[RMDB]
RNA sequence: GGGAACGACUCGAGUAGAGUCGAAAAAUAAUUUAUCCACCAUUGCAGAAGAGCUUUCCCGUAUGGGUGAUGAAGUUGCGGGGAUAGCUUCACAGACGAACUUACUCGCUCUUAAUGCUGCCAUUGAAGCAGCGCGUGCAGGUGAAGCUGGCCGAGGAUACGCUUACACAUUCGUGUGUAAGCGUAUAAAAGAAACAACAACAACAAC
Reactivity to DMS in 0.01 (KOAc 150mM, MgCl2 10mM, bicine 150mM(pH8.5), 24C), signal-to-noise 2, nucleotides 027 to 156: a120u010a040a140u010u010u000a090u000c020c030a090c030c020a110u000u030g030c070a140g010a100a080g010a100g050c050u010u000u000c010c010c000g000u000a110u000g000g020g020u010g010a080u010g000a100a180g020u000u000g020c010g000g030g030g010a060u000a090g010c020u000u000c020a070c020a240g010a140c070g010a050a110c050u020u000a110c120u000c050g020c030u020c090u010u000a040a090u010g010c020u000g000c020c020a150u010u000g000a080a050g000c010a020g010c030g030c080g030u010g020c090a110g040g020u010g010a030a030g000c010u010g000g040c060c020g000a120g010g010
Reactivity to 2A3 in 0.01 (KOAc 150mM, MgCl2 10mM, bicine 150mM(pH8.5), 24C), signal-to-noise 3, nucleotides 027 to 156: a020u180a020a040u110u080u150a100u050c050c020a010c040c010a060u030u100g030c020a020g030a160a010g010a070g030c000u030u020u000c000c000c000g020u080a150u110g070g030g010u080g040a060u060g030a090a050g040u070u050g000c010g000g020g000g060a040u060a020g000c000u020u000c040a040c020a030g120a030c040g040a140a060c050u080u080a060c010u120c080g020c020u040c000u090u150a100a080u230g000c000u010g010c000c020a200u140u210g030a170a010g000c000a000g000c020g000c010g000u060g020c060a050g040g050u010g010a000a000g020c030u020g050g000c000c020g020a020g060g030